[RMDB]
RNA sequence: GGGAACGACUCGAGUAGAGUCGAAAAGACGCAGCUGAGGUGCACGAGUUGACAGAGGAGGAGCGCAGGCAACAGGCCGCCAAUCCUAGUUACAUCGCAGACGUGCUGGGCCAAGACGACGACGAGGGAUGUAGUGAUAAUUCGUUAUCACUACAUCAAAAGAAACAACAACAACAAC
Reactivity to DMS in 0.01 (KOAc 150mM, MgCl2 10mM, bicine 150mM(pH8.5), 24C), signal-to-noise 9, nucleotides 027 to 126: g020a100c100g020c050a060g010c040u000g000a080g010g010u000g010c090a080c080g010a100g010u010u010g010a080c090a080g010a080g000g010a090g010g010a130g020c100g020c070a070g020g010c050a090a080c140a120g010g010c040c030g010c050c060a070a110u000c030c020u000a090g000u000u010a070c090a070u010c060g000c080a070g010a080c080g010u000g010c030u000g000g000g010c050c030a050a080g010a080c050g000a060c060g000a050c070g010a100g010g010
Reactivity to 2A3 in 0.01 (KOAc 150mM, MgCl2 10mM, bicine 150mM(pH8.5), 24C), signal-to-noise 8, nucleotides 027 to 126: g060a000c040g010c050a030g000c020u050g030a020g040g050u050g020c030a020c070g060a050g040u070u090g100a050c040a050g110a040g070g020a010g020g030a050g030c100g000c080a070g050g000c010a070a080c020a150g190g000c010c010g000c010c020a010a040u020c000c000u020a030g030u040u060a050c050a100u080c070g000c090a010g030a090c030g040u040g000c020u030g020g010g000c010c000a010a010g040a010c040g000a000c020g010a010c030g010a060g040g140